RNA sequence: GGGAACGACUCGAGUAGAGUCGAAAAGUACCCUUGUUCGCAAGGGUACAAAGACAGACUUCACUGUCAUAAAGAAGGUAACAUCUCAGAUACAAUAAGAGAAAAGCACCUACUUCGGUAGGUGCAAGUAUGGAUGACUGUUCGCAGUCAUCCAUACAAAAGAAACAACAACAACAAC
Reactivity to 2A3 in 0.01 (KOAc 150mM, MgCl2 10mM, bicine 150mM(pH8.5), 24C), signal-to-noise 2, nucleotides 027 to 126: g000u000a000c000c010c010u000u000g030u020u060c190g000c120a000a010g000g020g010u010a000c000a010a010a000g010a020c010a010g040a050c030u070u010c130a050c040u010g000u080c000a030u230a040a120a010g170a020a040g100g000u100a060a020c010a150u060c020u000c030a000g050a140u150a180c060a120a100u180a300a020g040a010g080a030a130a010a050g000c000a000c000c000u000a010c010u030u110c180g050g000u010a000g000g000u000g010c010a000a000
Reactivity to DMS in 0.01 (KOAc 150mM, MgCl2 10mM, bicine 150mM(pH8.5), 24C), signal-to-noise 1, nucleotides 027 to 126: g000u000a000c010c000c000u000u020g000u000u010c210g030c010a010a020g000g000g010u010a000c000a000a030a180g020a070c000a030g000a120c040u000u000c040a040c000u000g020u000c200a100u010a030a100a060g010a010a040g020g000u000a060a060c180a090u000c010u000c050a140g010a080u010a090c130a080a150u040a080a020g000a060g000a000a050a060a070g040c000a010c020c000u020a000c010u000u020c050g020g040u010a000g020g000u000g040c000a000a000